Chemical mapping of a 207-nucleotide RNA with 2A3 and DMS. Values cover nucleotides 27 to 156. 2A3 is a SHAPE reagent: it acylates the 2'-hydroxyl of flexible nucleotides of all four kinds. The reactions ran in a buffer of 150 mM KOAc, 10 mM MgCl2 and 150 mM bicine (pH 8.5), at 24 C.

RNA sequence: GGGAACGACUCGAGUAGAGUCGAAAAUUUCCUAAGGUCGUCGAAUCAACGACCUUGGACAUAUGAUCCGCGAAUUCAUCAGAAUUUUUGUGAUAAAGAUCGGUAACGGAUUUACUGCUGGAGUAUUGUAAUGCCUUAGCAAGCACGCUAGACGUAACACUUUUUCGUGAUUCGUCACGAAAAAGUGAAAAGAAACAACAACAACAAC
Reactivity to 2A3 in 0.01 (KOAc 150mM, MgCl2 10mM, bicine 150mM(pH8.5), 24C), signal-to-noise 3, nucleotides 027 to 156: u000u000u040c020c000u020a010a000g000g000u000c010g000u000c030g140a130a150u130c040a040a050c000g000a000c000c000u000u020g000g030a000c000a030u200a070u210g040a090u020c000c000g040c010g030a080a090u100u070c040a060u040c040a100g030a130a040u060u030u070u140u300g130u090g080a020u090a080a110a050g110a050u050c100g010g070u080a140a060c000g050g040a050u140u100u120a120c040u090g020c050u060g030g060a100g100u090a120u110u160g030u060a120a040u120g020c000c000u000u000a000g000c000a040a030g030c000a020c030g020c000u010a030g030a060c030g110u140a050a020
Reactivity to DMS in 0.01 (KOAc 150mM, MgCl2 10mM, bicine 150mM(pH8.5), 24C), signal-to-noise 1, nucleotides 027 to 156: u010u000u000c010c010u020a040a070g000g000u010c000g020u000c010g010a240a100u000c050a030a060c010g030a000c000c020u000u010g020g010a100c070a100u060a120u010g010a060u000c000c040g060c020g010a120a180u000u000c060a090u000c060a130g000a110a090u020u000u000u000u020g000u010g040a140u000a070a070a110g030a030u000c000g030g040u000a110a060c040g020g010a050u000u000u030a060c040u000g040c010u010g020g020a270g000u000a040u000u020g030u000a090a170u000g030c020c030u000u010a070g000c060a080a170g010c120a060c080g010c060u000a030g000a070c010g020u000a030a180